The record gives the reactivity of an RNA of 207 nucleotides to DMS and 2A3.
The data come from the RNA Mapping Database (RMDB), library M2RFPK.
2A3 adducts were read by reverse transcription with SuperScript II with manganese.
Reactivities are given for positions 27 through 156.
[RMDB]
RNA sequence: GGGAACGACUCGAGUAGAGUCGAAAAUGAAGCAAAUCCAUAAUUGCCAAUGAUGAGCAAUUCGCUAUUGCCGCCUAAAAACGGUUAGCCGGGGCUGCUAGAGCCUUGUUACCAAAGAUAGCAGGCGUUACGGCAUGAUGGUUCGCCAUCAUGCCAAACAUUAUCCAUCCUUCGGGAUGGAUAAUGUAAAAGAAACAACAACAACAAC
Reactivity to DMS in 0.01 (KOAc 150mM, MgCl2 10mM, bicine 150mM(pH8.5), 24C), signal-to-noise 3, nucleotides 027 to 156: u020g030a170a110g020c060a090a110a120u000c020c040a150u000a030a050u000u000g020c030c020a100a180u020g010a190u000g000a130g000c010a040a040u000u010c100g030c020u010a060u010u020g010c000c010g060c030c040u010a080a070a100a110a030c000g020g000u010u000a040g030c000c100g050g010g020g050c060u010g040c010u000a110g010a160g020c010c010u000u000g030u000u000a030c050c010a120a090a110g030a120u000a020g030c020a050g000g000c000g000u000u000a060c090g020g020c000a010u010g010a080u000g010g010u000u000c300g020c040c010a000u000c000a020u000g000c020c000a010a020
Reactivity to 2A3 in 0.01 (KOAc 150mM, MgCl2 10mM, bicine 150mM(pH8.5), 24C), signal-to-noise 5, nucleotides 027 to 156: u130g020a030a020g050c040a050a060a070u080c040c020a050u100a120a020u070u020g000c000c020a130a130u290g120a150u080g020a120g030c000a010a020u070u070c040g000c050u030a030u070u130g020c000c010g000c000c010u040a040a030a020a020a030c020g010g010u030u020a020g020c050c010g000g000g010g000c020u050g000c030u060a040g020a010g150c000c000u040u090g050u030u080a050c030c050a080a030a050g060a030u020a000g000c020a000g020g030c040g070u110u170a050c070g020g000c000a000u000g010a000u000g010g020u050u120c230g040c020c010a010u000c000a000u000g000c000c000a000a000